[RMDB]
RNA sequence: GGGAACGACUCGAGUAGAGUCGAAAAGCUUUUAUUUUCUAUUGUGCAAGGUAAGCAAAAAAGGAUCCAGCUUAGGUAAAAAGAAACAUGUCUUACAGCCAGAGUUUACACUCCAUAAAAUGGAGUAAACCGGCAUAUAGUUCGCUAUAUGCCGGUUAAAAGAAACAACAACAACAAC
Reactivity to 2A3 in 0.01 (KOAc 150mM, MgCl2 10mM, bicine 150mM(pH8.5), 24C), signal-to-noise 2, nucleotides 027 to 126: g020c000u020u110u140u140a150u060u180u060u060c110u000a190u070u130g060u060g060c050a070a040g130g030u120a080a000g000c010a000a020a000a020a000a130g090g000a000u040c040c040a050g010c020u050u140a050g020g000u240a190a100a000a020a000g090a010a050a000c090a070u100g060u030c030u000u020a000c050a010g020c000c010a010g010a000g040u000u000u000a030c060a060c030u000c000c000a050u240a180a230a030a100u090g000g000a000g000u000a030
Reactivity to DMS in 0.01 (KOAc 150mM, MgCl2 10mM, bicine 150mM(pH8.5), 24C), signal-to-noise 2, nucleotides 027 to 126: g010c070u010u010u000u030a040u000u020u000u000c030u000a120u010u000g040u010g020c040a080a080g020g000u030a030a030g050c010a000a030a060a030a050a000g060g000a070u030c010c030a120g040c060u010u000a090g000g040u050a030a080a110a030a030g000a070a010a050c150a040u010g000u010c000u010u030a010c080a170g000c020c020a200g010a110g020u000u030u010a120c060a010c010u000c000c010a010u020a040a070a050a300u000g000g020a030g000u000a020